Conditions: 150 mM KOAc, 10 mM MgCl2 and 150 mM bicine (pH 8.5), 24 C. Chemical mapping of a 207-nucleotide RNA with DMS and 2A3. It was measured as part of the RMDB library M2RFPK. For 2A3 the reverse transcriptase was SuperScript II with manganese.
RNA sequence: GGGAACGACUCGAGUAGAGUCGAAAAAGUGUAUGAAGUACGUAGAAUGUCGGCAAGCUCUAUAUAUGGACACUUACGAAGGGUUUUGGUUGUUUUGUAUCUCAAGCCGACUUUGAGUAUUUGAGGAAAAAGACUUACGCCUUCGGGCGUAAGUCAAGUUGUUUUACUAGUUCGCUAGUAAAACAACAAAAGAAACAACAACAACAAC
Reactivity to DMS in 0.01 (KOAc 150mM, MgCl2 10mM, bicine 150mM(pH8.5), 24C), signal-to-noise 1, nucleotides 027 to 156: a110g000u000g030u010a160u030g020a160a210g000u000a040c020g030u020a030g010a050a080u010g000u000c020g000g020c030a130a100g030c070u000c010u000a070u000a090u000a050u000g000g000a080c020a020c030u000u010a120c100g010a100a120g000g030g010u000u000u000u000g020g010u000u000g010u000u030u000u000g010u010a060u000c000u000c020a020a080g030c010c010g010a040c020u000u010u000g010a250g000u000a030u000u000u010g010a090g020g010a050a060a050a150a130g010a050c010u000u000a000c020g040c000c000u000u010c300g050g020g020c000g020u000a000a020g030u000c010a020a060
Reactivity to 2A3 in 0.01 (KOAc 150mM, MgCl2 10mM, bicine 150mM(pH8.5), 24C), signal-to-noise 3, nucleotides 027 to 156: a010g100u090g020u050a170u140g030a070a020g020u050a030c020g000u020a020g020a060a060u090g040u020c010g000g000c040a090a030g040c060u000c050u050a110u030a040u010a030u150g040g020a020c030a010c050u080u090a040c120g090a080a030g060g040g020u030u040u060u120g030g010u000u010g010u000u040u010u040g050u050a080u060c020u010c030a020a020g030c020c000g020a020c000u040u040u040g020a010g000u050a050u070u100u110g070a060g020g050a050a060a010a040a030g000a000c000u000u000a000c010g010c010c020u020u040c130g080g000g010c010g000u000a000a000g000u000c000a000a010